[RMDB]
RNA sequence: GGGAACGACUCGAGUAGAGUCGAAAAACGGGCAGUGGCGAUGGCAACGCGGCAGCCGCAGGGUCGACUUCUUCGCAGCCGCAACAGACGGGUCACGGGCAAAGAGGGGAACUCGUUCUGUUGGAAGUAUGGUAGUAGCUUUCGAGCUACUACCAUAAAAAGAAACAACAACAACAAC
Reactivity to DMS in 0.01 (KOAc 150mM, MgCl2 10mM, bicine 150mM(pH8.5), 24C), signal-to-noise 3, nucleotides 027 to 126: a060c060g000g020g000c030a090g040u020g020g000c040g000a080u010g010g020c050a070a080c100g030c020g000g020c070a080g010c060c060g000c130a130g000g010g010u000c080g000a100c050u010u010c060u010u010c090g000c050a120g000c040c030g000c000a010a030c000a060g020a050c000g000g000g010u020c110a100c040g000g000g030c130a060a040a110g030a060g010g000g010g020a090a030c040u000c010g010u030u040c010u020g000u000u000g000g000a050a080g010
Reactivity to 2A3 in 0.01 (KOAc 150mM, MgCl2 10mM, bicine 150mM(pH8.5), 24C), signal-to-noise 4, nucleotides 027 to 126: a000c040g000g030g000c040a040g030u090g050g040c040g050a090u100g070g000c040a030a020c050g000c000g080g000c020a020g020c050c000g030c030a040g030g020g020u040c010g020a050c040u040u000c010u060u050c060g000c040a030g010c030c020g020c010a000a000c010a010g040a010c010g020g000g000u030c070a030c110g010g010g040c060a100a090a010g050a080g020g030g020g010a050a010c010u000c030g080u220u010c000u010g010u020u010g010g020a050a000g070

Structure probing data (DMS and 2A3) for a 177-nucleotide construct. 2A3 adducts were read by reverse transcription with SuperScript II with manganese.